[RMDB]
RNA sequence: GGGAACGACUCGAGUAGAGUCGAAAAGAAUCCUCGUCGGCUUUUGUUUCCAGUGCUGGACUUGAUACUGAUUUCGAUCUGUAUGAGCCGUCUCCACUUAUAUUUCGACAACGAGGAUACAAUUAGAGGGUACCGAUUAGUUCGCUGAUCGGUACCCAAAAGAAACAACAACAACAAC
Reactivity to DMS in 0.01 (KOAc 150mM, MgCl2 10mM, bicine 150mM(pH8.5), 24C), signal-to-noise 6, nucleotides 027 to 126: g000a130a050u000c000c000u000c000g000u000c050g010g010c030u000u030u020u050g000u000u000u010c010c020a070g010u030g010c120u010g000g010a050c020u000u010g000a030u000a020c020u000g000a020u000u010u040c160g010a020u000c000u010g010u000a000u000g000a030g020c030c020g000u000c010u030c300c030a070c090u010u020a040u010a140u010u000u010c060g010a080c110a090a040c010g000a010g000g000a030u000a050c210a090a090u030u010a070g010a300
Reactivity to 2A3 in 0.01 (KOAc 150mM, MgCl2 10mM, bicine 150mM(pH8.5), 24C), signal-to-noise 6, nucleotides 027 to 126: g040a010a040u000c000c000u000c000g040u010c020g060g020c030u000u010u120u230g070u050u080u060c020c030a030g080u060g130c100u100g010g080a180c000u010u080g060a020u010a020c040u050g010a030u090u040u130c170g080a030u030c010u040g020u010a020u090g040a020g020c030c020g050u010c030u040c010c010a070c030u150u120a090u050a080u270u150u150c070g030a020c020a080a000c020g000a000g000g010a000u030a090c040a010a130u110u110a070g060a090